[RMDB]
RNA sequence: GGGAACGACUCGAGUAGAGUCGAAAAUGCGUCAUGCAUGCUCGCUGCUGAAAAAGGCCCGUACCCGGCUUACGAAGUUUCCGAUUGGUCGACCGGAGAUUACUUCAUCAAGCAUGGCUAUGCCCGUCCCGGCUUUCUCGAAAUGAAAAAAGGCGACUGCAUUAGUCAUAUUCGUAUGACUAAUGCAAAAAGAAACAACAACAACAAC
Reactivity to 2A3 in 0.01 (KOAc 150mM, MgCl2 10mM, bicine 150mM(pH8.5), 24C), signal-to-noise 3, nucleotides 027 to 156: u100g000c010g010u070c060a040u130g000c010a030u060g010c020u020c030g050c030u090g000c020u050g060a080a070a010a020a040g050g000c040c030c010g040u110a130c050c020c020g010g040c030u030u060a010c090g020a030a000g010u000u060u000c000c010g020a050u040u110g030g030u050c040g030a040c000c010g030g010a020g020a040u090u140a050c020u020u020c000a040u060c020a060a030g020c010a030u050g000g000c020u060a030u120g020c010c030c000g020u020c010c010c000g010g010c010u020u100u030c060u020c000g110a110a120a080u200g030a050a050a140a010a020a170g210g070c050g050a020c050
Reactivity to DMS in 0.01 (KOAc 150mM, MgCl2 10mM, bicine 150mM(pH8.5), 24C), signal-to-noise 1, nucleotides 027 to 156: u000g000c040g020u000c070a070u020g030c020a070u000g040c050u010c060g010c010u010g010c000u000g000a080a050a080a100a120g010g010c010c070c040g030u030a070c190c020c000g060g010c020u010u000a060c070g000a080a060g030u010u000u000c020c020g000a090u000u000g050g000u000c170g010a040c020c000g040g000a090g010a140u000u000a040c030u010u000c000a080u010c010a050a070g010c010a090u010g020g020c020u000a070u000g010c040c000c020g000u010c050c010c010g030g010c120u000u000u000c030u000c000g020a100a070a120u000g000a000a020a070a060a100a100g040g020c050g000a160c200